[RMDB]
RNA sequence: GGGAACGACUCGAGUAGAGUCGAAAAAAGUUCUGCUCUGAGGCUUGGGCAAGGCGUCAUAAAUCAGAGCUAUCCUAAGGCACAAACCCGAUGCCUUAGGGAGAGCUAAGGGUUGUAGGAGCUUAGAGAGCCUGUGGAAGGGCGAGCUAACUUCCGACCAGAAAGGUUGGUUCGCCAACCUUUCUGGAAAAGAAACAACAACAACAAC
Reactivity to 2A3 in 0.01 (KOAc 150mM, MgCl2 10mM, bicine 150mM(pH8.5), 24C), signal-to-noise 1, nucleotides 027 to 156: a000a000g020u030u030c030u010g020c000u000c010u030g010a020g070g000c080u100u030g070g000g000c070a050a050g100g020c100g190u080c060a090u070a120a070a080u030c010a000g000a010g020c020u030a160u070c020c010u000a010a040g000g000c000a000c010a010a000a060c100c010c030g060a060u030g000c000c000u000u020a000g000g010g000a050g000a000g000c100u260a100a170g000g020g000u030u010g010u010a010g000g000a010g010c050u010u010a000g000a000g000a000g160c000c010u050g050u120g200g140a070a030g030g010g050c000g000a020g030c000u000a000a010c030u140u120c010c000g020a040

Chemical mapping of a 207-nucleotide RNA with 2A3. The RNA was probed in 150 mM KOAc, 10 mM MgCl2 and 150 mM bicine (pH 8.5) at 24 C. It was measured as part of the RMDB library ARCHII.